[RMDB]
Background
Structure probing data (DMS and 2A3) for a 177-nucleotide construct.
RNA sequence: GGGAACGACUCGAGUAGAGUCGAAAAGAAAGAAAAGAAAAGAAAAGCCCAGACCAACGGAGGAGACCGCACUUCGGCAACAGCUGAGGUCCAAGUCCUGUAUAUGAUAGGAAAAACAGCUGCAAAAAGGGUAGCUAUAUUUCGAUAUAGCUACCCUAAAAGAAACAACAACAACAAC
Reactivity to DMS in 0.01 (KOAc 150mM, MgCl2 10mM, bicine 150mM(pH8.5), 24C), signal-to-noise 2, nucleotides 027 to 126: g000a150a050a150g010a100a040a080a210g010a120a060a030a020g010a090a090a130a080g000c000c000c000a030g020a070c040c020a020a050c110g030g030a070g000g020a180g000a080c100c090g020c080a060c030u000u000c050g030g000c100a120a180c080a040g000c030u000g020a070g000g000u000c030c040a090a040g000u010c000c050u010g010u030a100u080a050u030g000a060u000a020g000g000a000a070a110a090a090c090a040g020c020u020g020c100a010a020a110a080
Reactivity to 2A3 in 0.01 (KOAc 150mM, MgCl2 10mM, bicine 150mM(pH8.5), 24C), signal-to-noise 1, nucleotides 027 to 126: g090a030a000a000g110a010a120a010a000g170a000a140a040a000g090a150a110a000a000g000c100c000c000a000g020a010c000c000a000a070c000g000g010a000g040g020a030g020a040c030c030g010c020a030c040u020u010c010g040g040c100a050a000c000a060g000c000u040g010a030g000g060u000c040c070a020a000g020u030c000c000u000g190u010a060u000a000u300g200a000u070a070g020g000a040a040a040a040a040c050a000g000c010u000g020c060a000a000a000a090
The 2A3 profile rests on 733 reads.